RNA sequence: GGGAACGACUCGAGUAGAGUCGAAAAGUGAUCACUGUUCUUUUGCCAAGACACGGGGUGGACAAUAAGAUUCCUUUACAAAGCACUGGUGUAAGUGUUCGCCUGGUGCUGCAAAAAGCGGCUCACUCUAUAAUAUAAUGUUCGCAUUAUAUUAUAGAAAAGAAACAACAACAACAAC
Reactivity to 2A3 in 0.01 (KOAc 150mM, MgCl2 10mM, bicine 150mM(pH8.5), 24C), signal-to-noise 2, nucleotides 027 to 126: g010u010g000a050u070c040a010c080u040g020u080u030c050u050u050u030u030g040c040c040a130a040g030a080c010a020c040g020g000g000g030u010g020g000a010c030a030a060u100a070a030g030a070u100u100c000c000u040u060u040a100c110a100a210a020g040c020a050c110u030g030g000u070g020u080a140a130g060u010g030u080u040c010g010c020c000u080g080g000u010g000c010u020g000c000a040a040a000a000a000g020c030g030g020c020u020c000a000c000u030
Reactivity to DMS in 0.01 (KOAc 150mM, MgCl2 10mM, bicine 150mM(pH8.5), 24C), signal-to-noise 3, nucleotides 027 to 126: g020u010g020a030u000c200a100c030u010g000u000u000c120u010u000u000u000g000c050c150a110a040g000a110c040a020c010g020g000g010g020u010g000g000a030c030a040a070u010a100a100g000a130u010u000c020c000u000u000u010a060c080a070a120a130g000c120a010c040u000g010g010u000g010u010a060a100g010u010g010u000u000c020g000c010c010u000g000g040u000g000c000u000g000c060a030a010a020a030a050g000c020g000g010c070u000c020a030c030u000